[RMDB]
RNA sequence: GGGAACGACUCGAGUAGAGUCGAAAAAUGGGAACUGCUGGGUCCCUCGGAUGUCGAUCCCCUCUCCCGUUCGGGAAAAGGGGGACUCCGGGACUCCCUGCAGGCUGGGCACGAAGCCCCCACCGGGAUGGCAGCCGGUUCGCCGGCUGCAAAAGAAACAACAACAACAAC
Reactivity to DMS in 0.01 (KOAc 150mM, MgCl2 10mM, bicine 150mM(pH8.5), 24C), signal-to-noise 1, nucleotides 027 to 129: a160u040g010g020g020a080a070c020u010g000c020u000g010g010g030u000c130c040c020u020c050g010g000a040u030g000u040c020g010a150u000c000c000c000c000u010c250u020c020c000c030g080u070u080c250g040g010g010a000a000a030a040g010g020g030g020g000a030c020u030c000c000g000g000g020a100c200u010c000c000c000u000g040c050a000g020g010c140u040g000g000g000c000a120c180g020a210a140g010c020c020c050c030c060a040c090c060g000g000g000a000u000g010
Reactivity to 2A3 in 0.01 (KOAc 150mM, MgCl2 10mM, bicine 150mM(pH8.5), 24C), signal-to-noise 5, nucleotides 027 to 129: a010u110g020g030g020a070a080c040u000g000c030u050g000g010g000u030c000c000c000u000c020g020g000a060u190g020u030c050g070a160u170c040c000c000c000u010c000u020c000c010c000g130u250u300c180g000g000g000a000a040a010a000g010g000g000g010g000a000c000u000c000c040g000g000g000a000c020u020c000c000c000u000g020c020a020g000g010c030u040g020g010g010c060a020c150g110a110a030g030c020c000c000c010c020a050c000c000g010g000g000a050u110g060
Record summary:
Structure probing data (DMS and 2A3) for a 170-nucleotide construct. It was measured as part of the RMDB library 15KLIB. DMS adducts were read by reverse transcription with MarathonRT. For 2A3, 8,894 sequencing reads were counted. The reactions ran in a buffer of 150 mM KOAc, 10 mM MgCl2 and 150 mM bicine (pH 8.5), at 24 C.